[RMDB]
RNA sequence: GGGAACGACUCGAGUAGAGUCGAAAACAGGCGUAAAGGCUUGUCAAAUAGCGUGUUAAUAGCUUUGCUUUUGGCCGGGCGAGUGGUUAGUGAAUCAAAUGCAUAAUAAACUUCGGUUUAUUAUGCAGUUCAGACUAGAGUUCGCUCUAGUCUGAACAAAAGAAACAACAACAACAAC
Reactivity to DMS in 0.01 (KOAc 150mM, MgCl2 10mM, bicine 150mM(pH8.5), 24C), signal-to-noise 2, nucleotides 027 to 126: c060a030g010g010c000g030u000a050a130a190g010g000c010u010u000g000u000c110a050a080a070u020a020g040c070g010u010g010u000u000a090a080u010a100g010c030u010u010u000g010c040u000u000u000u000g000g000c040c040g030g010g030c030g010a060g020u000g000g010u000u000a100g010u010g000a060a090u010c110a050a080a290u000g000c000a010u000a030a000u000a000a000a010c000u010u010c180g030g000u000u010u000a000u000u000a000u000g000c000a010
Reactivity to 2A3 in 0.01 (KOAc 150mM, MgCl2 10mM, bicine 150mM(pH8.5), 24C), signal-to-noise 1, nucleotides 027 to 126: c040a010g080g000c030g040u160a060a170a090g100g010c010u030u010g040u000c040a010a000a150u100a040g040c040g000u040g050u090u160a090a040u060a150g020c020u040u150u150g020c000u110u070u070u060g000g000c000c000g000g020g000c000g000a040g000u040g020g000u100u060a060g020u090g150a020a030u090c040a110a150a060u090g000c010a000u000a020a000u010a040a010a010c010u020u040c100g000g000u010u000u020a000u000u000a000u000g000c010a000

The record gives the reactivity of an RNA of 177 nucleotides to DMS and 2A3. As a SHAPE reagent, 2A3 marks flexible, mostly unpaired nucleotides at the ribose 2'-OH.